The data come from the RNA Mapping Database (RMDB), library OK2TRN. Structure probing data (2A3 and DMS) for a 177-nucleotide construct. The DMS profile rests on 10,811 reads. For 2A3, 17,155 sequencing reads were counted. The RNA was probed in 150 mM KOAc, 10 mM MgCl2 and 150 mM bicine (pH 8.5) at 24 C.

RNA sequence: GGGAACGACUCGAGUAGAGUCGAAAAGGCAUGAGCCAUCACACUCGGCCACACGUCCUAAUGAACUAGGAUUCAUUAAACAUUCAGGUCCUCACUGGCCCCAUUCCAGGUGCUCCGUGGCUCACAGGAUAUGACGAGUAUUCGUACUCGUCAUAUCAAAAGAAACAACAACAACAAC
Reactivity to 2A3 in 0.01 (KOAc 150mM, MgCl2 10mM, bicine 150mM(pH8.5), 24C), signal-to-noise 3, nucleotides 027 to 126: g050g000c090a110u150g010a000g020c010c010a050u060c030a060c010a010c020u060c030g030g000c010c000a050c010a010c040g060u030c010c000u030a060a050u060g030a030a030c090u110a200g180g090a300u050u030c010a030u040u110a100a110a040c030a050u110u160c050a030g060g000u030c010c020u040c020a060c070u050g030g000c000c000c030c010a050u110u040c030c010a020g020g020u020g020c010u000c030c020g020u050g020g010c020u030c010a060c030a030g150
Reactivity to DMS in 0.01 (KOAc 150mM, MgCl2 10mM, bicine 150mM(pH8.5), 24C), signal-to-noise 8, nucleotides 027 to 126: g010g010c060a060u010g010a050g020c020c040a070u020c160a100c100a280c010u000c050g000g010c040c020a060c120a120c180g010u000c030c030u000a020a020u000g000a030a040c050u000a110g020g010a160u000u000c030a030u000u000a060a070a080c120a090u010u010c100a070g010g000u000c030c030u010c060a120c060u000g010g000c050c010c020c050a090u000u010c060c040a070g010g000u010g000c070u000c050c090g010u000g000g000c010u000c030a060c190a130g010